Source: RMDB library OK3TST, as collected in RNAgym.
The record gives the reactivity of an RNA of 207 nucleotides to 2A3 and DMS.
Values cover nucleotides 27 to 156.
Conditions: 150 mM KOAc, 10 mM MgCl2 and 150 mM bicine (pH 8.5), 24 C.

RNA sequence: GGGAACGACUCGAGUAGAGUCGAAAAGAUACGGACGGCUGUGAUAAGACGGCAGAAAUGUAUAAGGAUUAUUGCCCGCUUUGCCAAUUCCGUGCGAAAGACGGCGACACGGAUCUAACCGGACUCAACGAACGGGUGAAUAGAUAACAAUGAGCGACGUUAGGAUUAUGUUCGCAUAAUCCUAACGAAAAGAAACAACAACAACAAC
Reactivity to 2A3 in 0.01 (KOAc 150mM, MgCl2 10mM, bicine 150mM(pH8.5), 24C), signal-to-noise 4, nucleotides 027 to 156: g020a020u060a060c020g030g030a010c040g040g040c010u030g020u030g060a060u080a120a060g060a020c020g010g000c020a030g140a040a140a020u080g050u070a050u050a190a040g070g040a020u060u040a040u100u190g000c030c020c000g010c070u060u040u060g040c000c000a010a030u080u000c030c020g000u030g000c000g020a060a060a010g140a020c070g010g020c030g050a070c020a010c040g000g000a020u000c050u050a090a060c050c020g000g030a050c040u050c170a080a070c100g040a040a020c020g030g010g020u020g020a040a040u070a080g070a040u080a130a030c060a040a130u120g010a030g080c040g080a070
Reactivity to DMS in 0.01 (KOAc 150mM, MgCl2 10mM, bicine 150mM(pH8.5), 24C), signal-to-noise 2, nucleotides 027 to 156: g030a160u000a070c060g050g020a120c070g010g010c010u010g000u010g010a170u000a100a100g000a070c010g020g020c010a120g000a040a090a110u020g010u010a080u010a090a120g000g020a140u010u000a050u000u000g020c020c020c030g010c040u010u000u000g000c010c030a080a180u000u000c020c020g020u000g000c020g000a110a080a120g000a120c170g000g030c000g030a090c080a080c000g010g010a040u000c040u010a130a180c070c030g000g000a160c050u000c080a030a110c070g040a010a040c060g010g010g010u000g000a060a070u000a050g010a130u000a040a090c060a070a110u000g010a100g010c040g020a200
Source information: For DMS the reverse transcriptase was MarathonRT.